This 177-nucleotide RNA was probed chemically with DMS and 2A3. For 2A3, 865 sequencing reads were counted. The data come from the RNA Mapping Database (RMDB), library OK2TST.
RNA sequence: GGGAACGACUCGAGUAGAGUCGAAAAACGGCGGUGGCAAACAUCUGUACCGUGGUAAUUGAGGCUCCGGCGAUAUCUUUAUCUUCUUCCGCUGCCACUUGCAGAAUGCGGGUCAGUAAGUGUGGCCUAGUCGGAUGUGAUUCGUCACAUCCGACUAAAAAGAAACAACAACAACAAC
Reactivity to DMS in 0.01 (KOAc 150mM, MgCl2 10mM, bicine 150mM(pH8.5), 24C), signal-to-noise 2, nucleotides 027 to 126: a110c070g020g010c030g000g000u000g010g010c100a060a090a110c160a060u010c070u020g010u000a060c030c070g000u000g010g000u000a080a110u020u010g010a130g000g030c070u000c050c070g000g000c190g000a060u000a030u000c040u000u010u010a060u010c040u010u020c060u000u000c010c060g020c060u000g000c030c050a020c030u000u010g000c050a060g000a040a110u010g000c130g000g000g020u010c020a030g020u000a060a100g020u000g000u000g020g010c010c090
Reactivity to 2A3 in 0.01 (KOAc 150mM, MgCl2 10mM, bicine 150mM(pH8.5), 24C), signal-to-noise 1, nucleotides 027 to 126: a000c020g030g040c030g100g000u070g040g000c040a080a120a080c010a100u040c020u040g050u070a060c060c050g000u020g070g040u110a150a160u010u140g090a090g050g050c020u020c070c050g020g020c040g000a010u030a030u140c100u050u230u050a070u020c030u070u000c000u050u010c000c020g000c010u000g000c070c020a030c000u090u210g000c020a030g040a120a020u080g070c050g070g000g020u000c020a020g070u070a140a040g020u020g060u070g210g000c000c010